[RMDB]
RNA sequence: GGGAACGACUCGAGUAGAGUCGAAAAGAGCUGAAGUUCGCUUCAGCUCAAAACAAAACUGUACACGCAGUACAGAAAAACAAAAACAAAAAAGCGUAAAAAAAAGAUAGCAGUUCGCUGCUAUCAACAUCUACAUUACCUUCGGGUAAUGUAGAUGAAAAGAAACAACAACAACAAC
Reactivity to 2A3 in 0.01 (KOAc 150mM, MgCl2 10mM, bicine 150mM(pH8.5), 24C), signal-to-noise 2, nucleotides 027 to 126: g000a000g000c000u000g000a010a000g020u050u110c170g040c050u000u000c000a010g000c000u000c000a000a010a000a000c010a000a080a000a060c010u020g000u000a000c020a000c050g060c030a020g000u000a000c000a000g100a130a080a020a000a000c030a010a050a010a010a010c050a050a130a010a040a040a030g050c030g070u170a180a060a050a040a020a000a010a050g000a000u000a010g000c010a000g020u030u050c160g020c060u000g000c000u010a000u000c000a000a000
Reactivity to DMS in 0.01 (KOAc 150mM, MgCl2 10mM, bicine 150mM(pH8.5), 24C), signal-to-noise 2, nucleotides 027 to 126: g000a000g030c000u000g040a000a010g030u000u010c270g020c000u000u000c000a000g000c010u000c000a010a010a120a240c040a070a150a190a070c010u000g030u000a000c000a060c040g000c080a090g030u000a000c000a020g010a030a090a020a090a180c140a030a050a090a070a040c100a070a070a050a090a070a220g000c010g010u020a020a000a020a000a080a080a080a210g010a000u000a010g020c000a020g030u000u010c240g010c000u000g000c010u000a000u000c000a070a160
Source: RMDB library M2PK50, as collected in RNAgym.
The record gives the reactivity of an RNA of 177 nucleotides to 2A3 and DMS.